[RMDB]
RNA sequence: GGGAACGACUCGAGUAGAGUCGAAAAGACGAGAGUAUUGCGGCAGCUCAAAGGCGGAAAGAGAAAAACUGCGCACAAGAACAAUAUAGUUGAUCCGCCAACACGAAGCGAGAUCGUGAAGGUAGAACGACGCACUGGUAUUCGUACCAGUGCGUCGAAAAGAAACAACAACAACAAC
Reactivity to 2A3 in 0.01 (KOAc 150mM, MgCl2 10mM, bicine 150mM(pH8.5), 24C), signal-to-noise 1, nucleotides 027 to 126: g030a000c080g000a030g000a080g290u140a230u080u170g000c120g030g000c020a000g120c000u030c060a000a050a000g080g000c000g000g000a040a300a040g160a000g140a190a000a030a000a000c060u080g030c030g000c000a000c000a000a240g090a060a000c080a000a300u280a150u280a080g020u030u030g000a000u030c050c050g000c000c000a020a020c000a000c000g020a000a030g020c000g000a000g050a110u020c000g000u000g030a000a000g080g000u080a060g000a150a000